[RMDB]
RNA sequence: GGGAACGACUCGAGUAGAGUCGAAAACUCUUUUACUCGGCAUGAUACCACCGUUAUCGGGUCAACAGAGUAGUUGCAAAUGACAACAAUGCUCAGGGUUAUGCUCUCGUUGCCUAAUGGCGGUGCGCGGACGACUCAAUGUUCGCAUUGAGUCGAAGGUAAUACGAUGAUUCGUCAUCGUAUUACCAAAAGAAACAACAACAACAAC
Reactivity to DMS in 0.01 (KOAc 150mM, MgCl2 10mM, bicine 150mM(pH8.5), 24C), signal-to-noise 2, nucleotides 027 to 156: c030u000c030u000u000u000u010a080c020u000c000g000g010c040a110u000g020a180u000a060c050c010a110c010c000g030u010u000a010u000c030g020g010g010u000c030a040a050c040a090g000a030g040u000a060g050u000u010g000c040a080a150a180u010g000a140c030a050a100c040a080a090u000g030c050u010c060a170g030g020g030u000u000a070u010g010c000u000c000u000c080g000u010u000g000c010c010u010a030a030u000g020g000c040g000g000u000g010c060g000c020g000g000a150c010g000a030c000u000c000a000a000u010g020u000u000c260g020c000a030u000u000g010a030g000u000c000g000a020a040
Reactivity to 2A3 in 0.01 (KOAc 150mM, MgCl2 10mM, bicine 150mM(pH8.5), 24C), signal-to-noise 7, nucleotides 027 to 156: c020u030c000u040u070u070u130a120c100u070c070g090g030c150a120u170g060a100u230a130c040c000a000c000c000g010u010u000a010u040c070g000g020g050u130c040a000a000c010a000g000a000g010u050a020g050u060u140g050c030a090a150a180u110g050a100c010a120a020c020a110a170u140g020c040u050c070a030g110g010g010u170u150a050u110g000c000u000c000u010c080g000u000u000g000c000c000u030a040a010u020g000g000c000g000g030u020g010c010g020c010g070g030a050c010g000a000c000u000c000a000a000u010g020u030u040c180g000c080a000u000u000g000a000g000u000c000g000a020a010